[RMDB]
RNA sequence: GGGAACGACUCGAGUAGAGUCGAAAAGGAUCCUCUCACAGGAUUGUCUCUGUGUUCCGAAACUCCAACAGUAUUGCUUCGGGACACCUGCAGCAAUACUGUAGGUAUAGAGAGUAGGAGAGGAUCGGUAAUGCAUCCCAUUCGUGGGAUGCAUUACAAAAGAAACAACAACAACAAC
Reactivity to 2A3 in 0.01 (KOAc 150mM, MgCl2 10mM, bicine 150mM(pH8.5), 24C), signal-to-noise 3, nucleotides 027 to 126: g080g010a000u000c000c000u000c000u000c000a060c050a020g050g050a190u200u300g200u080c030u000c000u080g030u000g070u200u040c010c000g020a060a040a020c040u060c010c010a070a040c040a020g030u030a020u040u060g000c010u010u030c010g000g000g170a170c080a260c080c000u000g000c000a010g000c010a000a000u030a020c010u000g000u000a010g000g000u040a020u160a100g150a000g000a000g040u060a030g010g040a000g000a010g000g000a000u010c030g000
Reactivity to DMS in 0.01 (KOAc 150mM, MgCl2 10mM, bicine 150mM(pH8.5), 24C), signal-to-noise 3, nucleotides 027 to 126: g000g000a020u000c020c000u000c000u000c010a090c050a050g000g030a130u010u020g020u020c060u010c000u000g010u000g020u010u010c020c030g000a090a130a160c070u000c070c040a080a040c070a050g010u000a060u000u000g010c000u000u000c000g000g000g000a170c190a050c030c010u010g000c060a040g000c020a040a020u000a120c000u000g000u000a000g010g020u000a120u010a060g000a050g000a070g010u000a110g010g000a060g000a010g020g010a000u000c000g030